[RMDB]
RNA sequence: GGGAACGACUCGAGUAGAGUCGAAAACAAUCAUAGCAAUAUUGGCGUGAUUGCACGUAAAGCAGACUAUUUACCAUGGAUUCGUGCAGCACUAACUGAACAGUCUGUUGCAAGCUAUAUGCAACAACCCCUCAUGGGAUUUCGAUCCCAUGAGGGGAAAAGAAACAACAACAACAAC
Reactivity to 2A3 in 0.01 (KOAc 150mM, MgCl2 10mM, bicine 150mM(pH8.5), 24C), signal-to-noise 3, nucleotides 027 to 126: c010a000a030u150c030a060u080a080g060c030a120a170u120a230u300u180g130g010c030g000u020g010a250u000u040g000c010a010c040g090u160a000a040a020g120c020a020g040a080c050u110a190u190u230u110a170c070c080a080u060g000g130a150u080u170c030g010u070g010c030a010g000c000a020c010u040a140a020c040u090g080a070a030c020a080g070u060c040u060g000u000u000g000c010a030a030g010c000u100a080u010a040u220g030c010a000a040c010a000a040
Reactivity to DMS in 0.01 (KOAc 150mM, MgCl2 10mM, bicine 150mM(pH8.5), 24C), signal-to-noise 1, nucleotides 027 to 126: c040a120a030u000c040a050u000a040g010c030a100a080u000a150u010u010g000g010c060g040u000g000a050u000u000g030c070a010c020g000u000a060a050a080g000c050a040g000a040c080u000a120u000u000u000a110c100c060a040u000g030g040a190u000u010c050g030u000g020c020a030g090c010a120c120u000a080a110c150u000g000a130a120c120a080g010u020c070u000g000u000u000g010c020a020a050g010c080u010a090u000a120u000g000c040a020a010c030a040a190
This 177-nucleotide RNA was probed chemically with 2A3 and DMS.
Conditions: 150 mM KOAc, 10 mM MgCl2 and 150 mM bicine (pH 8.5), 24 C.
Values cover nucleotides 27 to 126.
The data come from the RNA Mapping Database (RMDB), library OK2TST.
For 2A3, 1,565 sequencing reads were counted.